[RMDB]
The record gives the reactivity of an RNA of 177 nucleotides to DMS and 2A3. For DMS the reverse transcriptase was MarathonRT. Conditions: 150 mM KOAc, 10 mM MgCl2 and 150 mM bicine (pH 8.5), 24 C. Reactivities are rounded to 0.1 and cut off at 0 and 3. Values cover nucleotides 27 to 126. The data come from the RNA Mapping Database (RMDB), library OK2TRN.
RNA sequence: GGGAACGACUCGAGUAGAGUCGAAAAUCAUCCCCGAAUACCGCCGAUCGCUGGUUUGGACGACUUCAGGGGGACGGUGUUUCACUCGGCUCGCUGGGAUCACACGGUUCCGCUGCUGGGACGCCGAAGUCAAGUACAGUUUCGACUGUACUUGACUAAAAGAAACAACAACAACAAC
Reactivity to DMS in 0.01 (KOAc 150mM, MgCl2 10mM, bicine 150mM(pH8.5), 24C), signal-to-noise 5, nucleotides 027 to 126: u020c210a150u010c030c000c010c090g010a080a050u010a090c110c030g000c020c050g020a080u000c050g020c110u010g010g000u000u000u000g030g010a130c070g010a150c120u000u000c070a120g040g000g000g000g010a190c010g010g010u000g010u000u010u010c100a240c030u000c010g010g010c020u000c180g010c020u010g040g030g000a020u000c020a120c200a140c220g000g000u000u000c000c010g020c030u000g010c030u010g000g000g010a100c060g010c030c010g000a070
Reactivity to 2A3 in 0.01 (KOAc 150mM, MgCl2 10mM, bicine 150mM(pH8.5), 24C), signal-to-noise 3, nucleotides 027 to 126: u090c010a050u060c000c000c000c000g060a050a020u060a150c020c010g030c030c020g080a100u120c080g040c230u170g110g000u070u090u160g070g020a070c050g010a040c040u070u050c110a140g000g000g010g030g000a010c000g030g000u010g040u030u100u140c070a090c020u040c010g000g000c010u050c110g040c050u280g010g010g020a030u020c010a040c030a010c260g000g000u020u010c000c000g010c050u040g000c010u020g000g000g060a040c040g000c010c010g020a050
The DMS profile rests on 4,312 reads.